[RMDB]
RNA sequence: GGGAACGACUCGAGUAGAGUCGAAAAGAUAUGGACCGACUCCCCACCAGUGUCUUCCGAAGAACUACCAUUGCAUCGGAAACGAUGCAAUGGUAGGGAGGAAGCUACUGAGGUCGGUCCUAAGUCACGAAAGAGUAUCGUUCGCGAUACUCUUUCGAAAAGAAACAACAACAACAAC
Reactivity to DMS in 0.01 (KOAc 150mM, MgCl2 10mM, bicine 150mM(pH8.5), 24C), signal-to-noise 2, nucleotides 027 to 126: g010a150u030a270u010g010g000a030c020c030g010a020c030u000c160c070c000c090a300c160c030a010g000u000g010u010c000u010u000c010c010g000a150a180g020a180a200c000u000a030c000c000a010u000u000g000c000a000u000c000g000g000a110a130a300c000g000a000u000g000c000a000a000u000g000g030u000a000g000g000g000a150g010g000a020a000g000c010u010a020c000u000g010a120g000g000u000c010g040g000u000c000c000u000a020a100g030u010c100a240